Source: RMDB library OK1LIB, as collected in RNAgym. The record gives the reactivity of an RNA of 177 nucleotides to DMS and 2A3. The 2A3 profile rests on 12,052 reads. 2A3 adducts were read by reverse transcription with SuperScript II with manganese. The RNA was probed in 150 mM KOAc, 10 mM MgCl2 and 150 mM bicine (pH 8.5) at 24 C. The DMS profile rests on 33,950 reads.
[RMDB]
RNA sequence: GGGAACGACUCGAGUAGAGUCGAAAAGAAGAGAAAGGAGACACACGGACAGUCUCCAGAGGUUCCUAAGGCCUCGAUCGCGCCUGCCGGGAAUCAUGGACCCCCGGUUGUCCAUGAGAGAAGAAGAAAAUUUACUACGUUUCGACGUAGUAAAUUUAAAAGAAACAACAACAACAAC
Reactivity to DMS in 0.01 (KOAc 150mM, MgCl2 10mM, bicine 150mM(pH8.5), 24C), signal-to-noise 9, nucleotides 027 to 126: g010a140a100g010a100g010a070a150a120g010g000a020g000a010c020a090c130a110c120g000g000a100c150a120g000u000c000u000c000c010a040g010a080g000g010u000u000c030c070u020a100a090g010g010c010c010u010c080g010a070u020c070g010c140g010c030c010u010g000c050c030g000g000g010a090a080u000c020a020u000g000g010a040c030c070c040c040c060g000g000u020u010g000u000c010c020a030u000g000a060g010a120g000a100a090g010a100a080g010a060
Reactivity to 2A3 in 0.01 (KOAc 150mM, MgCl2 10mM, bicine 150mM(pH8.5), 24C), signal-to-noise 7, nucleotides 027 to 126: g060a030a010g100a010g050a050a100a040g040g010a020g010a000c040a000c010a020c190g080g050a020c050a070g010u000c000u000c000c000a010g000a010g010g010u060u120c030c010u070a080a040g050g000c010c000u020c040g020a080u110c040g010c030g010c030c010u020g010c020c010g020g020g030a010a050u040c010a010u040g030g010a030c010c030c000c020c050g060g000u060u060g010u000c010c010a030u060g010a020g010a010g010a110a060g050a070a020g080a010